[RMDB]
RNA sequence: GGGAACGACUCGAGUAGAGUCGAAAACACUGGGGGCGCAGGUGCGGCUCGACAACCGGACCAGCCGCCUGGAGCUCGCCGCCGUUCCGUCCGACCUUCUGCGCGACUGGCAGCGCCGCCCGGAGGGGCACACACCAUUGUUCGCAAUGGUGUGUGCAAAAGAAACAACAACAACAAC
Reactivity to 2A3 in 0.01 (KOAc 150mM, MgCl2 10mM, bicine 150mM(pH8.5), 24C), signal-to-noise 1, nucleotides 027 to 126: c090a030c040u050g000g000g000g060g000c020g050c040a030g090g030u070g080c050g030g060c040u050c050g090a070c030a110a090c050c020g000g060a060c040c040a010g010c000c000g050c020c020u000g030g010a010g020c030u000c060g020c000c020g050c000c040g060u030u020c020c020g000u090c020c020g070a090c040c010u050u030c040u050g020c020g000c010g080a050c030u040g050g000c030a070g000c020g000c000c010g110c030c000c000g000g010a010g030g030g020
Reactivity to DMS in 0.01 (KOAc 150mM, MgCl2 10mM, bicine 150mM(pH8.5), 24C), signal-to-noise 2, nucleotides 027 to 126: c070a080c030u010g000g000g020g010g000c030g060c030a090g040g010u010g030c040g000g000c030u000c040g010a050c170a140a200c050c010g010g000a110c020c050a100g040c050c030g020c020c010u040g000g000a120g000c140u000c040g030c110c010g040c060c010g000u000u000c020c010g040u000c020c030g010a070c110c050u000u010c030u010g000c130g000c030g000a060c050u000g010g000c080a130g030c040g000c010c040g010c040c000c010g010g010a130g000g040g020
Chemical mapping of a 177-nucleotide RNA with 2A3 and DMS. Conditions: 150 mM KOAc, 10 mM MgCl2 and 150 mM bicine (pH 8.5), 24 C. For DMS, 1,531 sequencing reads were counted. DMS adducts were read by reverse transcription with MarathonRT.